The record gives the reactivity of an RNA of 177 nucleotides to DMS and 2A3. For DMS the reverse transcriptase was MarathonRT. It was measured as part of the RMDB library OK2TRN. The 2A3 profile rests on 4,680 reads.

RNA sequence: GGGAACGACUCGAGUAGAGUCGAAAAAGGAAAGUCGAGCCGUAGCUGCAGACCUCAAGCCCAUUUAUCAAGCGGCCACUUUGGAGGAAUCUGAGGCUGCCUUGGAUGCGUUUGCCAACAAAUGGGACACAUGUCCAUGAUUCGUCAUGGACAUGUGAAAAGAAACAACAACAACAAC
Reactivity to DMS in 0.01 (KOAc 150mM, MgCl2 10mM, bicine 150mM(pH8.5), 24C), signal-to-noise 5, nucleotides 027 to 126: a060g020g000a080a090a060g000u000c040g000a080g020c030c260g000u010a090g020c080u010g020c040a110g000a070c030c020u000c070a110a090g000c020c000c000a080u000u000u020a110u020c080a060a060g020c040g000g010c010c030a130c180u010u000u000g020g010a030g020g030a100a110u000c020u010g000a070g010g010c030u000g000c110c050u000u000g010g010a120u010g010c080g020u010u000u010g020c050c100a080a110c150a020a060a040u000g000g010g010a280
Reactivity to 2A3 in 0.01 (KOAc 150mM, MgCl2 10mM, bicine 150mM(pH8.5), 24C), signal-to-noise 4, nucleotides 027 to 126: a000g100g010a070a030a010g030u050c010g030a000g000c020c060g110u070a040g000c060u080g000c010a030g020a070c000c020u040c060a050a060g020c020c010c010a010u070u070u020a200u110c050a060a010g020c010g030g010c020c010a070c110u130u110u140g090g000a040g040g070a110a110u040c030u020g020a030g060g000c020u030g000c040c000u020u020g070g030a040u070g030c040g060u070u140u110g080c040c020a030a030c020a040a130a050u050g030g020g030a010